[RMDB]
RNA sequence: GGGAACGACUCGAGUAGAGUCGAAAAGAUAUGGAUGCAGAACUACGCAAACCUAGCGACGAAGUCGGAAACGACAGAGCUAGGUUUGCGCUGCAUCCUAAGUCUAAAACAGUGGUUCGCCACUGAAGUGUAGAGAGAAGUUCGCUUCUCUCUACACAAAAGAAACAACAACAACAAC
Reactivity to 2A3 in 0.01 (KOAc 150mM, MgCl2 10mM, bicine 150mM(pH8.5), 24C), signal-to-noise 4, nucleotides 027 to 126: g020a000u060a020u150g000g000a000u000g020c020a000g070a170a100c170u240a040c300g010c010a010a010a010c000c000u000a000g000c010g300a300c080g080a220a010g000u010c000g010g060a060a040a060c020g000a000c010a030g050a000g000c010u000a000g000g000u000u000u000g020c000g000c000u000g000c000a000u000c000c000u000a000a000g020u000c000u020a040a070a030a050c010a000g000u010g050g050u080u140c280g070c080c000a000c010u010g000a150a010
Reactivity to DMS in 0.01 (KOAc 150mM, MgCl2 10mM, bicine 150mM(pH8.5), 24C), signal-to-noise 4, nucleotides 027 to 126: g010a030u000a300u010g000g000a000u000g020c000a000g000a100a060c100u010a300c010g020c000a010a000a010c000c010u010a010g000c020g010a150c200g000a080a120g000u000c000g000g000a060a070a140c000g010a010c010a040g010a140g000c000u010a000g010g000u010u000u000g000c010g000c010u000g000c000a020u000c000c000u000a010a040g010u000c000u000a030a050a100a150c000a000g010u000g000g000u000u020c240g020c000c010a010c000u000g000a040a090